Source: RMDB library TTRDEL, as collected in RNAgym.
This 177-nucleotide RNA was probed chemically with 2A3 and DMS.
The DMS profile rests on 4,784 reads.
High DMS reactivity at an A or C suggests that its Watson-Crick edge is free.
For DMS the reverse transcriptase was MarathonRT.
For 2A3, 13,768 sequencing reads were counted.
For 2A3 the reverse transcriptase was SuperScript II with manganese.
RNA sequence: GGGAACGACUCGAGUAGAGUCGAAAAGAUAUGGAAUCGGUUGAGCUACGGAUCGGAAACGAUCCCGUAGCAAUGAUGCGACGAUUCCUAAGUCAAAGUGAUUAGAUAGUUCGCUAUCUAAUCACAAGUCUAAUUGGAUGUUCGCAUCCAAUUAGACAAAAGAAACAACAACAACAAC
Reactivity to 2A3 in 0.01 (KOAc 150mM, MgCl2 10mM, bicine 150mM(pH8.5), 24C), signal-to-noise 3, nucleotides 027 to 126: g000a000u020a020u090g000g000a020a000u000c010g050g000u040u040g020a010g000c000u010a000c010g010g000a010u010c010g000g000a020a010a010c000g000a000u010c050c010c010g010u010a000g000c000a000a030u020g010a010u040g030c100g110a110c000g000a210u010u000c000c000u010a040a000g010u000c040a080a060a130g000u000g000a010u000u000a010g010a010u000a000g030u060u070c250g030c200u000a000u000c000u010a000a000u000c000a000c000a000a010
Reactivity to DMS in 0.01 (KOAc 150mM, MgCl2 10mM, bicine 150mM(pH8.5), 24C), signal-to-noise 4, nucleotides 027 to 126: g020a020u000a190u010g010g000a020a000u000c000g000g010u000u010g010a100g020c010u010a010c020g000g000a010u000c000g020g000a070a070a070c010g000a000u000c120c120c130g030u000a010g010c000a090a130u010g000a140u000g020c020g000a110c020g000a020u000u000c000c000u000a030a080g000u000c040a080a120a160g000u000g000a010u000u000a010g000a010u000a000g010u000u020c250g020c000u010a000u000c000u000a010a010u000c000a000c000a020a060